[RMDB]
RNA sequence: GGGAACGACUCGAGUAGAGUCGAAAAUGAUCUUCGGAUCAAGCGCCGGGGUCUGGAGGGACGACGAAGUGUGCAAGGCCUGAAGCCUCCACGGGCUGAUGACCACACAGAGUCCCGAUGAAGGACGGAGGCACCCGUUAUUCUGUUUCGACAGAAAAACAGUAUUAGCGUUCGCGCUAAUACUGUUAAAAGAAACAACAACAACAAC
Reactivity to DMS in 0.01 (KOAc 150mM, MgCl2 10mM, bicine 150mM(pH8.5), 24C), signal-to-noise 1, nucleotides 027 to 156: u000g010a050u000c000u000u000c160g040g000a080u000c010a100a050g030c100g020c010c040g030g010g010g050u010c000u010g010g040a170g070g090g010a090c030g050a300c050g000a080a140g000u010g000u000g000c060a190a210g040g050c000c000u000g050a170a280g000c000c000u000c010c160a300c160g010g010g000c010u060g000a210u010g040a110c250c000a100c040a020c050a030g010a300g000u000c000c010c010g000a080u000g000a300a180g000g010a030c000g030g000a300g030g030c080a010c030c010c000g040u000u000a080u000u010c080u010g010u000u000u000c260g010a120c030a130g000a000a080a190
Reactivity to 2A3 in 0.01 (KOAc 150mM, MgCl2 10mM, bicine 150mM(pH8.5), 24C), signal-to-noise 1, nucleotides 027 to 156: u070g010a020u050c050u100u130c250g090g000a000u040c070a040a030g090c020g000c070c000g090g070g080g000u000c000u030g070g000a030g000g000g010a010c010g000a010c030g020a260a050g050u010g000u020g020c080a140a140g030g030c000c000u020g050a160a040g040c030c030u100c090c000a040c020g010g000g000c010u000g000a080u110g040a030c070c000a000c000a010c010a020g030a010g050u010c000c000c000g010a110u070g010a010a010g020g020a010c020g030g040a050g010g000c010a020c000c010c000g020u040u090a110u140u000c020u050g030u000u070u050c110g050a030c080a110g080a090a080a070